[RMDB]
RNA sequence: GGGAACGACUCGAGUAGAGUCGAAAAGUACCCAUCUUCGGAUGGGUACAAAUAAACUUGACAAGCGCCGUCAAGAAAAAGGCGCAAUAUAAGAACAAACAAAAACGCACAGGUUCGCCUGUGCGAACUUAUGUAUCAUGUUCGCAUGAUACAUAAGAAAAGAAACAACAACAACAAC
Reactivity to 2A3 in 0.01 (KOAc 150mM, MgCl2 10mM, bicine 150mM(pH8.5), 24C), signal-to-noise 6, nucleotides 027 to 126: g000u000a000c010c000c000a000u000c000u030u050c160g140g000a000u000g000g000g000u000a000c000a000a000a000u010a000a010a010c020u010u030g010a010c030a150a170g010c000g000c010c010g010u040c030a050a090g160a230a090a010a000a000g000g000c000g000c000a040a010u080a000u020a020a070g080a130a030c040a100a090a010c030a030a080a080a020a020c000g000c000a000c000a010g030g070u040u070c180g110c050c010u000g000u000g000c000g000a010a000
Reactivity to DMS in 0.01 (KOAc 150mM, MgCl2 10mM, bicine 150mM(pH8.5), 24C), signal-to-noise 5, nucleotides 027 to 126: g020u000a000c000c000c000a010u010c010u010u010c210g030g010a010u000g010g000g020u000a000c000a010a060a080u000a090a080a190c060u000u000g010a010c030a080a120g010c010g020c010c000g000u000c010a020a080g000a050a070a030a060a090g000g000c010g020c010a090a030u000a060u010a080a080g020a100a110c170a060a080a060c100a060a070a070a110a110c020g000c000a000c000a020g000g000u000u010c230g030c010c000u000g000u000g010c000g000a000a030